[RMDB]
Source information
This 207-nucleotide RNA was probed chemically with DMS and 2A3. Reactivities are given for positions 27 through 156. 2A3 adducts were read by reverse transcription with SuperScript II with manganese. DMS adducts were read by reverse transcription with MarathonRT. The reactions ran in a buffer of 150 mM KOAc, 10 mM MgCl2 and 150 mM bicine (pH 8.5), at 24 C. It was measured as part of the RMDB library M2RFPK.
RNA sequence: GGGAACGACUCGAGUAGAGUCGAAAAUCAUUGAGAUGCUGGGCGCUAUGGUCGUCCUCCUCGGGCUGACCUCCUUCUCAGCUGCUGACCGGCGCCGCACAGGCGGCAUCUCAGCUUCGUGUGCAAAAAAAGAAUGGUCGGUUCGCCGACCAUUCAAGGAGUACAUGUAGUUCGCUACAUGUACUCCAAAAGAAACAACAACAACAAC
Reactivity to DMS in 0.01 (KOAc 150mM, MgCl2 10mM, bicine 150mM(pH8.5), 24C), signal-to-noise 2, nucleotides 027 to 156: u010c080a110u000u000g020a010g010a020u010g020c010u010g000g010g030c000g000c000u000a050u000g070g000u010c010g010u010c050c020u000c020c100u000c090g020g010g030c020u010g000a080c050c130u000c100c100u000u010c050u000c000a050g020c030u020g000c050u030g010a040c020c020g020g010c000g020c010c010g000c110a140c130a110g020g030c040g040g010c000a010u000c000u000c010a050g030c070u010u000c140g040u000g040u000g050c010a000a000a070a190a060a110a300g000a040a030u010g010g020u000c010g020g000u000u010c300g020c040c010g000a020c000c000a000u000u000c000a070a190
Reactivity to 2A3 in 0.01 (KOAc 150mM, MgCl2 10mM, bicine 150mM(pH8.5), 24C), signal-to-noise 2, nucleotides 027 to 156: u150c020a060u020u090g000a000g010a000u010g000c000u030g000g000g040c020g010c030u070a140u300g030g000u010c020g040u060c010c030u040c030c000u040c030g000g020g000c000u020g010a050c020c030u100c000c020u150u060c030u000c010a010g000c010u080g030c030u070g010a010c010c020g010g000c000g000c010c010g100c030a110c030a080g230g000c000g000g000c000a000u000c000u000c000a000g000c030u150u140c070g090u060g030u040g180c110a080a080a000a040a020a020a050g010a010a010u000g000g000u000c000g010g040u070u040c160g030c070c000g000a010c000c010a000u010u000c000a000a010